[RMDB]
RNA sequence: GGGAACGACUCGAGUAGAGUCGAAAAACGACGCCGUGCCUACUACGGUAGGCACGGCCUCGAAUUACGUUCAUCUACUUAAUCGUAGACGCAUCAAUACAUCAUUCAUGGAACGGGGGAUGGUGAAACUAGAAUCAAACGUUCGCGUUUGAUUCAACUUAACUACCAGCUUCGGCUGGUAGUUAAGAAAAGAAACAACAACAACAAC
Reactivity to 2A3 in 0.01 (KOAc 150mM, MgCl2 10mM, bicine 150mM(pH8.5), 24C), signal-to-noise 1, nucleotides 027 to 156: a020c010g010a000c000g000c010c000g040u000g010c000c020u000a020c010u030a030c270g080g000u000a000g000g160c000a000c000g000g000c000c000u000c000g000a030a070u200u090a000c010g000u000u020c000a010u020c000u000a010c000u050u230a100a020u220c040g000u020a010g000a020c010g020c020a080u160c090a100a170u110a180c000a000u020c000a000u010u020c010a030u060g090g010a000a010c010g010g000g010g010g000a000u000g000g020u020g050a060a050a000c070u060a070g000a000a000u010c000a000a000a000c000g000u030u040c290g030c010g050u000u010u000g000a010u000u000c000a010a000